[RMDB]
RNA sequence: GGGAACGACUCGAGUAGAGUCGAAAAGUGGAAACCGAGUUCGCGCCAGAUAAAGUCACCACGCGCGUUAGCGGUUAUUGUCAGAUUGGCCUGCCAGGCAUAUUGAAAAACUGUGGUGAUCAUCCGCCUGUAUACCUGAAUUCGUUCAGGUAUACAGAAAAGAAACAACAACAACAAC
Reactivity to 2A3 in 0.01 (KOAc 150mM, MgCl2 10mM, bicine 150mM(pH8.5), 24C), signal-to-noise 8, nucleotides 027 to 126: g110u100g040g050a110a020a010c020c010g010a040g140u050u040c010g000c010g010c030c020a020g030a100u160a120a260a020g040u010c000a010c030c000a020c020g010c000g000c000g020u050u060a060g030c000g020g030u050u040a080u100u130g050u020c010a010g140a300u110u160g090g020c020c020u050g090c050c020a010g010g000c030a030u080a060u130u150g080a070a070a010a020a020c070u060g000u020g030g000u010g010a010u050c010a050u020c010c050g050c010
Reactivity to DMS in 0.01 (KOAc 150mM, MgCl2 10mM, bicine 150mM(pH8.5), 24C), signal-to-noise 9, nucleotides 027 to 126: g020u000g010g010a080a090a060c020c010g000a110g010u000u000c020g030c070g010c040c170a120g000a110u010a060a100a150g010u000c030a030c020c010a040c060g010c030g010c020g020u010u010a100g010c010g010g010u000u000a070u010u010g010u010c060a060g010a140u010u000g020g000c030c020u000g010c080c060a090g010g010c040a050u010a070u000u000g000a070a050a070a070a070c110u000g030u010g010g010u000g000a030u000c110a090u000c050c070g010c200
This 177-nucleotide RNA was probed chemically with 2A3 and DMS. For 2A3, 13,611 sequencing reads were counted. DMS (dimethyl sulfate) methylates the pairing face of unpaired adenines and cytosines. The RNA was probed in 150 mM KOAc, 10 mM MgCl2 and 150 mM bicine (pH 8.5) at 24 C.